[RMDB]
RNA sequence: GGGAACGACUCGAGUAGAGUCGAAAAUGGAUCACAAGGUCAGGAGAUCGAGACCAUCCUGGCUAACACGGUGAAACCCUGUCUCUACUAAAAGUACAAAAAAUUAGCCAGGCGUGGCGGCAGGCGCCUGUAGUCCCAGCUACUCCGGAGGCUGAGGCGUUAUGAACUGAUUCGUCAGUUCAUAACGAAAAGAAACAACAACAACAAC
Reactivity to 2A3 in 0.01 (KOAc 150mM, MgCl2 10mM, bicine 150mM(pH8.5), 24C), signal-to-noise 1, nucleotides 027 to 156: u110g010g050a030u040c000a020c040a140a120g030g040u020c010a000g040g010a090g000a110u140c160g040a000g030a110c020c060a030u020c000c070u010g010g020c000u010a150a020c130a020c160g020g000u010g060a070a110a060c020c000c000u020g020u010c010u010c020u080a160c020u070a070a090a070a020g090u060a090c070a020a080a010a020a000a100u110u040a010g050c010c010a020g000g040c000g020u000g010g020c000g000g000c030a000g060g000c030g000c010c020u060g030u030a020g020u000c010c000c000a010g000c020u040a020c020u010c030c050g030g050a040g000g050c030u020g020a060g040g030